Chemical mapping of a 177-nucleotide RNA with 2A3 and DMS.
For DMS, 1,434 sequencing reads were counted.
2A3 adducts were read by reverse transcription with SuperScript II with manganese.
DMS (dimethyl sulfate) methylates the pairing face of unpaired adenines and cytosines.
The data come from the RNA Mapping Database (RMDB), library OK2TRN.
For DMS the reverse transcriptase was MarathonRT.
[RMDB]
RNA sequence: GGGAACGACUCGAGUAGAGUCGAAAAGAUGGCUCUAAGGUAUUUGCCGGCUCGCUGUUCGAGUCGACAUGUACGUGGCUUGUCAACGCGUCUAAUGUUGACCACCGUCCUGGCGGCGGGCUUUGCCGUCCACAUUGGCCUUCGGGCCAAUGUGGACAAAAGAAACAACAACAACAAC
Reactivity to 2A3 in 0.01 (KOAc 150mM, MgCl2 10mM, bicine 150mM(pH8.5), 24C), signal-to-noise 1, nucleotides 027 to 126: g070a050u120g010g020c010u030c040u100a080a060g090g070u050a150u080u080u120g050c020c010g030g000c050u050c070g050c080u150g100u160u150c020g020a000g000u010c000g000a010c000a010u040g000u000a020c020g020u020g040g010c010u120u110g050u110c020a070a000c000g000c020g080u030c070u160a160a120u070g000u000u030g000a000c000c000a070c020c020g000u010c000c020u020g030g000c000g040g000c010g030g010g000c050u020u080u060g020c030c000
Reactivity to DMS in 0.01 (KOAc 150mM, MgCl2 10mM, bicine 150mM(pH8.5), 24C), signal-to-noise 1, nucleotides 027 to 126: g000a070u000g010g000c030u000c110u000a090a120g000g000u010a000u010u010u000g010c070c010g000g010c010u000c000g010c230u010g000u010u000c030g000a040g000u000c010g000a020c030a000u000g010u000a010c010g000u010g010g010c040u000u010g020u010c210a080a020c000g010c060g010u030c180u010a150a100u000g010u010u000g020a020c000c080a160c120c050g000u020c020c030u000g020g000c010g010g000c000g000g000g040c020u000u000u000g000c000c030